[RMDB]
Conditions: 150 mM KOAc, 10 mM MgCl2 and 150 mM bicine (pH 8.5), 24 C. Structure probing data (DMS and 2A3) for a 207-nucleotide construct. For DMS the reverse transcriptase was MarathonRT.
RNA sequence: GGGAACGACUCGAGUAGAGUCGAAAACGGGAUUCGUCCCGCUUUGAUCCUAAGUCUACAUUUGUGCGCAGGGAUGGAGUACAUCGGAAACGAUGUACGUUGAAAUCCCUGAACUACGCACUUAUGUAGAUAUGGACUGUUGCGAAUUCGUUCGCAAGCUAGUAGACCAUUUCGAUGGUCUACUAGCAAAAGAAACAACAACAACAAC
Reactivity to DMS in 0.01 (KOAc 150mM, MgCl2 10mM, bicine 150mM(pH8.5), 24C), signal-to-noise 2, nucleotides 027 to 156: c010g000g000g040a040u000u020c300g020u000c000c010c000g030c030u000u000u010g010a190u000c000c010u000a070a260g010u000c000u020a020c000a030u000u000u000g020u000g040c020g000c020a060g040g010g000a070u010g010g010a300g030u000a000c000a000u000c000g010g000a190a150a250c040g020a010u000g040u000a000c000g010u020u020g000a110a180a190u000c010c000c010u010g020a020a160c010u010a110c000g000c010a020c000u000u000a010u000g010u010a010g020a000u010a100u000g010g010a090c100u010g020u000u000g000c010g000a050a250u010u000c080g000u000u010c020g010c030a090a200
Reactivity to 2A3 in 0.01 (KOAc 150mM, MgCl2 10mM, bicine 150mM(pH8.5), 24C), signal-to-noise 2, nucleotides 027 to 156: c020g000g020g010a030u050u130c200g080u040c120c000c020g000c050u200u100u150g130a200u020c000c010u050a140a040g030u000c000u010a010c020a000u000u000u000g010u000g020c020g000c000a000g030g000g000a010u000g020g000a020g000u000a010c000a010u000c020g030g030a110a070a020c000g000a000u000g010u000a010c000g000u090u000g000a030a000a000u010c000c000c000u000g000a000a010c000u040a020c040g000c000a000c000u000u010a010u000g000u040a000g000a000u010a010u010g010g000a020c080u170g150u300u090g010c010g010a040a050u100u080c240g110u140u030c010g000c010a000a050